[RMDB]
RNA sequence: GGGAACGACUCGAGUAGAGUCGAAAACACCGGGGCCUUGUUGGCACCGCAGCAAACAGGACGCGUCGUCGCGACAACGGCAGGCUGGGCAACCGGCUGGUGCCGAACGUCGCUCGACACGGGGGUGGAACUCAUUAAACUUCGGUUUAAUGAGUUCAAAAGAAACAACAACAACAAC
Reactivity to DMS in 0.01 (KOAc 150mM, MgCl2 10mM, bicine 150mM(pH8.5), 24C), signal-to-noise 4, nucleotides 027 to 126: c120a200c110c020g010g000g000g010c030c020u000u010g010u010u010g000g030c010a050c060c090g010c120a130g000c100a060a040a090c080a070g000g000a090c020g020c040g000u000c010g000u000c300g010c000g010a010c000a070a300c000g010g030c000a190g000g000c000u000g010g000g000c300a100a170c000c010g010g000c000u000g010g010u000g010c000c000g000a040a090c250g000u000c000g000c000u000c010g000a010c010a030c010g010g000g000g000g010u010g010
Reactivity to 2A3 in 0.01 (KOAc 150mM, MgCl2 10mM, bicine 150mM(pH8.5), 24C), signal-to-noise 3, nucleotides 027 to 126: c040a020c020c000g010g000g040g000c010c000u210u300g100u150u150g140g000c020a010c030c030g040c030a040g030c030a030a100a050c040a040g070g150a060c020g020c020g010u010c010g030u040c080g000c000g000a000c000a020a040c010g000g000c000a000g000g020c000u020g000g000g000c030a060a130c010c000g010g000c000u070g110g240u230g010c000c000g010a010a000c060g020u000c000g000c000u000c000g000a000c010a000c010g010g000g000g000g000u120g080